Structure probing data (DMS and 2A3) for a 207-nucleotide construct. Source: RMDB library OK3TST, as collected in RNAgym. Reactivities are given for positions 27 through 156. 2A3 adducts were read by reverse transcription with SuperScript II with manganese.
[RMDB]
RNA sequence: GGGAACGACUCGAGUAGAGUCGAAAAGAAGGACUGAAACGUUCCGUCGACAGAUUUAUCCUGAUUACAAAGCGUUACGGGACGAGACAGAACCUGAGUUAAAGCAACAAUUCGAAACAACUGAAGAAGUUCUCAGGCUGAUGAACAUUCCUCAGAACAUAGGACCAUGAUUCGUCAUGGUCCUAUGAAAAGAAACAACAACAACAAC
Reactivity to DMS in 0.01 (KOAc 150mM, MgCl2 10mM, bicine 150mM(pH8.5), 24C), signal-to-noise 3, nucleotides 027 to 156: g020a100a070g000g000a300c050u010g010a050a150a300c050g010u010u000c020c000g040u000c010g050a130c030a070g020a070u000u000u000a060u020c070c070u010g010a270u010u000a160c040a090a070a080g010c050g020u010u000a040c000g000g010g000a030c000g000a150g000a300c040a060g000a040a130c000c030u010g000a170g030u000u000a080a050a130g030c050a090a120c040a070a160u000u000c020g020a100a050a050c060a080a090c020u000g010a040a030g000a040a090g000u000u000c010u000c010a120g010g020c100u010g010a170u000g010a060a040c020a160u000u000c020c000u000c010a020g000a090a230
Reactivity to 2A3 in 0.01 (KOAc 150mM, MgCl2 10mM, bicine 150mM(pH8.5), 24C), signal-to-noise 4, nucleotides 027 to 156: g100a020a010g000g020a060c030u050g030a110a070a020c010g000u010u000c000c020g000u020c030g000a020c020a040g130a040u100u150u170a090u160c030c040u110g050a100u080u130a140c100a100a120a050g050c040g070u090u060a000c020g010g000g000a000c020g020a020g010a000c020a000g010a010a100c000c020u010g010a010g000u110u120a130a090a040g130c030a010a110c030a090a110u110u050c040g060a080a090a050c070a070a060c040u060g020a020a000g040a060a020g040u080u010c000u000c010a040g090g000c030u120g020a170u110g020a040a000c010a120u030u000c010c000u000c000a030g000a060a010